[RMDB]
The data come from the RNA Mapping Database (RMDB), library RSTRND. Chemical mapping of a 207-nucleotide RNA with DMS and 2A3. The RNA was probed in 150 mM KOAc, 10 mM MgCl2 and 150 mM bicine (pH 8.5) at 24 C.
RNA sequence: GGGAACGACUCGAGUAGAGUCGAAAAGGAGGAUGCUGAGCGUCGUUUAGAAGACUUGCUGAUGCAGUUGAGCCUCAGGGCUGCAUCGGGACUUUAACUGCGGAUAUGCUCGCCAUCAGUUGUCUGCGACAUCGAUGGGGGCAGAAAAAUCGCCAACGUUGAUCACUAUGUUCGCAUAGUGAUCAACAAAAGAAACAACAACAACAAC
Reactivity to DMS in 0.01 (KOAc 150mM, MgCl2 10mM, bicine 150mM(pH8.5), 24C), signal-to-noise 1, nucleotides 027 to 156: g050g010a080g020g010a080u010g020c030u000g000a060g000c060g020u000c030g010u000u000u000a220g000a100a070g000a040c030u000u000g000c000u000g030a060u000g000c020a010g050u000u000g000a060g000c010c000u000c000a080g000g000g000c020u000g000c000a030u020c000g040g000g000a110c030u020u010u000a130a060c020u000g030c080g020g020a130u000a180u010g000c030u000c000g010c010c000a030u000c010a120g040u000u000g000u000c090u010g030c150g030a090c040a070u000c070g010a020u000g050g020g000g010g030c010a050g000a010a010a040a110a120u000c040g020c010c030a030a150c160
Reactivity to 2A3 in 0.01 (KOAc 150mM, MgCl2 10mM, bicine 150mM(pH8.5), 24C), signal-to-noise 6, nucleotides 027 to 156: g050g020a020g000g010a020u070g010c050u030g030a030g020c030g020u010c000g000u050u070u070a140g010a200a010g010a020c030u110u300g010c000u020g000a000u000g000c000a000g000u000u000g000a010g040c000c010u000c000a000g000g000g000c000u000g000c000a000u000c000g000g010g000a020c020u080u190u230a110a020c000u050g000c000g000g000a000u010a010u020g000c000u000c020g300c030c000a010u020c050a140g020u030u010g020u030c080u290g130c150g040a010c000a010u010c000g000a000u000g000g000g010g000g000c010a000g000a000a020a000a010a000u160c090g040c110c050a060a050c140